[RMDB]
RNA sequence: GGGAACGACUCGAGUAGAGUCGAAAAAAGUAGCAGAAUAGAAUGGUGAAAAUCCAUUCCGCCGAAAGGGCAAAGGUUCCUUGGCAAUGUUCGUCAGCCGAGGGUUAGCCGAUCCUAAGGUCACCCCGUGGGUCUUGCGAUUCGUCGCAAGACCCACAAAAGAAACAACAACAACAAC
Reactivity to 2A3 in 0.01 (KOAc 150mM, MgCl2 10mM, bicine 150mM(pH8.5), 24C), signal-to-noise 1, nucleotides 027 to 126: a000a000g200u260a040g120c000a000g050a180a010u090a220g000a000a010u020g000g000u020g000a010a010a010a010u010c000c000a060u010u000c000c000g000c000c000g270a100a090a060g060g000g060c210a100a000a040g000g020u000u000c110c000u000u020g000g040c090a030a070u240g000u110u140c150g000u100c240a010g300c010c000g000a000g000g020g010u000u240a000g060c000c000g000a040u010c010c030u000a160a110g000g000u040c000a140c000c000c100c060

Structure probing data (2A3) for a 177-nucleotide construct. For 2A3, 308 sequencing reads were counted.